Structure probing data (DMS and 2A3) for a 207-nucleotide construct. For 2A3, 2,522 sequencing reads were counted. The reactions ran in a buffer of 150 mM KOAc, 10 mM MgCl2 and 150 mM bicine (pH 8.5), at 24 C.

RNA sequence: GGGAACGACUCGAGUAGAGUCGAAAACCGUGGAAAGCUACUCGAGCGAGGCGGAGAUCGAGCGCCAGUUCGAGCCCGGCGACCUGAAGUUGCUUCGGCUUCUUCUUGUUCGCGUCCUGCCUGCAACGGCUCCUUCUUCACACCAGCCGGAGUUGAAGAUUACUAGGUACUUCGGUACCUAGUAAUCAAAAGAAACAACAACAACAAC
Reactivity to DMS in 0.01 (KOAc 150mM, MgCl2 10mM, bicine 150mM(pH8.5), 24C), signal-to-noise 1, nucleotides 027 to 156: c000c050g040u030g010g000a070a080a150g020c010u000a060c000u010c030g020a040g000c040g020a090g100g050c040g010g000a140g010a120u000c050g010a180g050c020g020c050c080a110g120u000u010c000g000a090g070c030c050c040g040g020c000g050a120c000c000u010g000a040a120g020u000u010g020c030u020u000c300g050g010c010u010u000c030u000u000c010u000u000g000u000u000c010g060c040g000u000c030c000u000g000c090c010u020g000c030a130a130c080g000g000c000u000c010c010u010u000c080u000u010c120a100c070a040c020c030a300g020c000c000g000g040a090g000u010u000g030a100a210
Reactivity to 2A3 in 0.01 (KOAc 150mM, MgCl2 10mM, bicine 150mM(pH8.5), 24C), signal-to-noise 3, nucleotides 027 to 156: c030c020g000u080g050g140a250a110a040g050c090u080a060c020u040c050g020a050g040c030g020a130g040g000c040g010g020a070g010a110u100c080g050a050g090c020g090c090c010a010g010u020u040c020g020a020g020c030c010c000g050g010c000g000a000c000c000u010g000a000a000g000u000u010g010c000u020u140c270g100g010c000u010u010c000u010u000c010u010u060g120u150u020c000g000c020g030u070c010c030u050g000c020c000u070g020c050a030a040c040g010g000c010u040c000c000u030u070c000u030u040c060a090c030a070c070c020a030g040c040c020g040g020a040g030u030u070g030a120a040